[RMDB]
RNA sequence: GGGAACGACUCGAGUAGAGUCGAAAAGUCUGAUUAAGGUACUGAUUGUGAUGACGAUAGUAAGUCAGCAGGUGGAAGCACUUGUACGGUGGUUACUGCAGCCUCAUAUACAUGAAUGACUGAUGUACACAUUCGAAUGGUUCGCCAUUCGAAUGUGAAAAGAAACAACAACAACAAC
Reactivity to DMS in 0.01 (KOAc 150mM, MgCl2 10mM, bicine 150mM(pH8.5), 24C), signal-to-noise 2, nucleotides 027 to 126: g030u010c030u000g020a100u000u010a070a110g020g010u000a040c050u010g000a170u010u000g020u010g000a060u010g000a060c060g000a130u010a100g030u000a040a130g000u000c000a110g010c030a010g000g020u010g000g000a080a070g010c020a030c060u000u000g020u000a080c160g000g020u010g020g000u000u000a060c060u010g000c160a080g010c050c040u000c040a030u000a090u000a040c090a010u010g000a090a110u010g000a050c090u020g000a070u000g010u000a100
Reactivity to 2A3 in 0.01 (KOAc 150mM, MgCl2 10mM, bicine 150mM(pH8.5), 24C), signal-to-noise 1, nucleotides 027 to 126: g000u000c010u040g040a070u110u070a150a050g100g010u070a050c030u000g140a110u010u050g030u050g070a140u000g010a000c040g000a020u040a040g140u120a130a000g030u030c040a040g040c050a010g000g050u010g000g040a030a050g030c010a000c030u010u090g050u060a030c040g050g010u040g040g020u030u080a010c030u030g000c010a030g040c010c010u020c010a060u090a000u000a080c090a060u090g030a050a020u060g060a070c040u050g080a030u090g000u050a010